[RMDB]
Chemical mapping of a 177-nucleotide RNA with DMS and 2A3. For 2A3 the reverse transcriptase was SuperScript II with manganese. For DMS, 657 sequencing reads were counted.
RNA sequence: GGGAACGACUCGAGUAGAGUCGAAAAGUCUAGCGAACGGAUCCCACCCGGGACACACGCAAGUCGCGAAUUACGCCGACCGGCCAAGGUCAAUUGCAGAACUCAACUGCAUGAGUAAGCUAGACGAGAUCCGUCACCUAUUCGUAGGUGACGGAUCAAAAGAAACAACAACAACAAC
Reactivity to DMS in 0.01 (KOAc 150mM, MgCl2 10mM, bicine 150mM(pH8.5), 24C), signal-to-noise 2, nucleotides 027 to 126: g000u000c000u000a000g000c000g000a170a050c020g000g010a030u000c000c000c000a080c300c000c000g060g000g000a080c100a060c030a110c050g010c080a010a130g010u040c080g000c090g040a220a070u010u010a000c170g090c020c060g040a050c000c180g040g010c030c050a180a080g020g010u000c010a100a050u000u000g020c000a010g000a000a070c240u000c240a170a120c000u030g000c030a070u030g000a130g000u000a010a210g020c000u000a000g000a050c000g010a110
Reactivity to 2A3 in 0.01 (KOAc 150mM, MgCl2 10mM, bicine 150mM(pH8.5), 24C), signal-to-noise 2, nucleotides 027 to 126: g000u000c000u000a000g000c010g040a060a080c050g030g050a030u080c020c000c010a020c020c000c010g020g020g000a010c020a040c000a000c090g000c110a070a020g130u070c050g000c040g020a120a180u290u120a140c070g000c030c080g030a030c000c010g030g010c000c010a070a010g000g000u020c010a050a050u080u000g000c010a020g090a230a150c100u100c190a070a090c050u000g000c000a010u030g010a010g030u010a000a010g000c000u000a010g000a000c010g010a000